Structure probing data (DMS and 2A3) for a 177-nucleotide construct. Values cover nucleotides 27 to 126. The RNA was probed in 150 mM KOAc, 10 mM MgCl2 and 150 mM bicine (pH 8.5) at 24 C. 2A3 adducts were read by reverse transcription with SuperScript II with manganese.
RNA sequence: GGGAACGACUCGAGUAGAGUCGAAAAUAAUAGUGCUACAAUUGUGAUGCCAUACACCAACAGUGUACCUAUGGAUAACAUGUUUAGGCAUAACAACGUCACCCUAAUGGUUAUCCCAUUUGUACCGGAACGGAUUCCGGUUCGCCGGAAUCCGUUCAAAAGAAACAACAACAACAAC
Reactivity to DMS in 0.01 (KOAc 150mM, MgCl2 10mM, bicine 150mM(pH8.5), 24C), signal-to-noise 1, nucleotides 027 to 126: u010a160a110u020a170g050u000g040c010u000a110c080a180a220u000u000g000u000g000a110u000g010c010c070a220u000a130c160a050c010c050a100a040c210a120g000u010g000u000a050c110c000u020a150u000g010g000a040u000a040a010c060a000u010g050u050u000u000a180g000g000c210a020u020a060a010c080a050a040c150g000u000c080a060c290c010c010u000a070a040u000g000g000u000u000a000u000c020c070c070a100u000u010u000g000u000a070c120c040g020
Reactivity to 2A3 in 0.01 (KOAc 150mM, MgCl2 10mM, bicine 150mM(pH8.5), 24C), signal-to-noise 1, nucleotides 027 to 126: u210a020a000u000a060g070u050g070c040u020a070c020a190a300u060u110g050u070g070a050u050g040c010c030a010u020a070c080a010c010c020a050a060c010a160g030u010g030u190a010c000c000u030a000u080g010g000a000u000a010a030c010a040u140g080u040u000u000a040g000g040c010a020u080a180a060c040a020a010c190g010u080c100a050c010c010c000u020a000a040u030g050g000u030u060a010u090c080c010c000a000u010u020u050g010u000a000c000c010g100